[RMDB]
RNA sequence: GGGAACGACUCGAGUAGAGUCGAAAAGAAAACAUAGCUAUCGAAGAGGAAACUCAAGUGUGUGUGGAGAUAGCUAUGGAAAAGAAAAGAAAAGACACACACACGAAAGAAAAGAAAAGAAAAGAAAGGGUUUACAUAUCUUCGGAUAUGUAAACCCAAAAGAAACAACAACAACAAC
Reactivity to 2A3 in 0.01 (KOAc 150mM, MgCl2 10mM, bicine 150mM(pH8.5), 24C), signal-to-noise 2, nucleotides 027 to 126: g070a010a130a000a000c030a000u000a000g000c000u000a050u000c040g070a090a050g040a090g020g070a000a110a010c110u080c160a280a270g010u030g000u000g010u000g000u030g030g000a120g000a070u000a020g000c000u000a000u000g010g020a000a020a020a000g020a040a010a050a000g110a010a110a000a000g180a020c000a000c000a000c000a000c000a000c000g000a050a040a100g100a050a010a020a050g230a080a100a000a010g100a050a270a000a000g110a090a000a000

Chemical mapping of a 177-nucleotide RNA with 2A3. The 2A3 profile rests on 1,256 reads. It was measured as part of the RMDB library OK1LIB.